[RMDB]
The data come from the RNA Mapping Database (RMDB), library OK1LIB. This 177-nucleotide RNA was probed chemically with DMS and 2A3. For DMS, 68,458 sequencing reads were counted. DMS adducts were read by reverse transcription with MarathonRT.
RNA sequence: GGGAACGACUCGAGUAGAGUCGAAAAACUAGUAUGUACACGAUGAGACUGCCGUGUCGUCUAGACUUCGGAUCCAAUAAUCUCAGAUCUGCGAGAUAUUGUCUCAAGAGUACGAGACAAGUACUCAGUGUUAGCACUACUUCGGUGGUGUUAACACAAAAGAAACAACAACAACAAC
Reactivity to DMS in 0.01 (KOAc 150mM, MgCl2 10mM, bicine 150mM(pH8.5), 24C), signal-to-noise 9, nucleotides 027 to 126: a110c020u000a020g000u040a010u000g000u050a020c010a020c020g000a110u010g010a110g010a080c090u010g010c060c010g020u000g010u000c020g000u010c020u010a020g000a120c070u010u010c050g000g000a060u030c060c070a060a080u030a070a080u010c050u000c040a120g010a080u030c090u020g000c190g010a020g000a050u010a070u010u020g000u000c010u000c020a080a110g010a040g010u010a020c040g000a100g020a080c180a050a080g000u010a030c000u000c010a160
Reactivity to 2A3 in 0.01 (KOAc 150mM, MgCl2 10mM, bicine 150mM(pH8.5), 24C), signal-to-noise 9, nucleotides 027 to 126: a000c010u020a010g060u130a050u060g100u110a010c010a000c020g050a050u140g030a030g080a080c080u110g110c080c000g010u010g000u010c000g000u000c010u010a020g010a120c020u050u010c050g050g020a020u000c020c020a040a060u120a090a110u030c040u010c060a070g020a220u020c040u120g110c090g040a020g010a020u070a060u090u080g030u000c010u000c030a050a020g040a010g060u040a020c050g010a010g050a080c060a060a030g020u010a010c000u000c030a010

The RNA was probed in 150 mM KOAc, 10 mM MgCl2 and 150 mM bicine (pH 8.5) at 24 C.